[RMDB]
RNA sequence: GGGAACGACUCGAGUAGAGUCGAAAAAGCACUAGAUGGGUUGUAGCGAAUGUAGCAGCCGCAACAGCAACUACGCCGACGCCUACUGCUUCCGCAACAGGCACAGUAGAAGGCAUCGCUGCACAACUCGCUAACACAAGUUUAAACAAUGAUACGGCCGUCAAGAAAUUUUCGAAUUUCUUGACGGAAAAGAAACAACAACAACAAC
Reactivity to DMS in 0.01 (KOAc 150mM, MgCl2 10mM, bicine 150mM(pH8.5), 24C), signal-to-noise 2, nucleotides 027 to 156: a070g010c070a120c090u000a120g020a130u000g000g010g020u020u000g010u000a020g040c010g010a040a110u020g000u010a150g060c030a070g010c040c070g000c030a180a190c070a130g000c060a090a110c040u000a030c060g030c020c040g020a060c060g020c050c040u000a100c010u000g030c030u000u000c070c130g000c000a060a180c110a240g000g050c300a080c050a050g000u000a040g010a110a100g000g000c030a060u000c090g050c010u000g000c020a280c040a080a030c040u000c040g000c020u000a040a060c090a060c020a110a120g030u010u010u000a050a090a050c040a030a160u010g020a120u000a080c070g000g000
Reactivity to 2A3 in 0.01 (KOAc 150mM, MgCl2 10mM, bicine 150mM(pH8.5), 24C), signal-to-noise 4, nucleotides 027 to 156: a020g020c030a010c070u060a040g040a170u080g020g000g060u080u010g020u070a000g000c000g020a020a040u070g000u040a070g040c020a000g060c060c040g040c060a070a100c030a070g030c020a040a100c040u120a030c100g060c100c070g100a090c050g030c020c000u040a050c020u050g050c020u170u030c050c050g030c040a140a130c030a190g010g000c030a000c010a030g010u000a010g010a120a030g030g000c000a020u080c040g000c000u000g000c020a010c000a020a060c010u010c020g010c010u080a170a000c060a000c020a030a030g010u050u080u140a100a110a010c040a090a120u120g030a050u070a130c020g050g010